The record gives the reactivity of an RNA of 177 nucleotides to 2A3 and DMS. Values cover nucleotides 27 to 126. For DMS the reverse transcriptase was MarathonRT. The 2A3 profile rests on 1,362 reads. For 2A3 the reverse transcriptase was SuperScript II with manganese. Reactivities are rounded to 0.1 and cut off at 0 and 3. As a SHAPE reagent, 2A3 marks flexible, mostly unpaired nucleotides at the ribose 2'-OH.
[RMDB]
RNA sequence: GGGAACGACUCGAGUAGAGUCGAAAAGUUGGGGCCUUGCCCCUGCGAGAGUAGGACGCUGCCAAGCAACUAAUGUUCCACAGUAGCUCAGUGGUAGAGCAAUCGGCUGUUAACCGAUCGGUCGUAGCCGAUCGUACGACUUCGGUCGUACGAUCGGAAAAGAAACAACAACAACAAC
Reactivity to 2A3 in 0.01 (KOAc 150mM, MgCl2 10mM, bicine 150mM(pH8.5), 24C), signal-to-noise 2, nucleotides 027 to 126: g030u030u030g020g030g020g030c060c190u170u300g020c000c010c040c000u000g020c030g000a110g010a000g020u050a070g000g050a040c060g000c020u000g000c000c000a050a050g070c010a080a000c000u100a060a100u200g010u020u030c020c000a110c030a110g050u090a030g020c010u030c070a060g070u140g100g110u210a120g000a000g000c000a050a120u070c010g050g020c030u010g070u180u100a040a040c040c020g020a110u090c040g030g030u030c050g030u000a020g100
Reactivity to DMS in 0.01 (KOAc 150mM, MgCl2 10mM, bicine 150mM(pH8.5), 24C), signal-to-noise 2, nucleotides 027 to 126: g010u000u030g020g010g010g000c000c260u000u010g000c040c060c000c000u000g010c020g000a230g000a240g020u000a030g010g000a090c210g000c030u000g010c030c040a050a100g050c030a010a060c090u020a080a090u020g010u000u000c020c020a050c090a080g010u000a090g010c030u010c020a100g040u010g020g000u000a130g000a040g000c050a110a060u000c010g010g010c020u040g000u000u010a070a100c040c030g020a050u010c080g010g020u000c080g010u000a070g020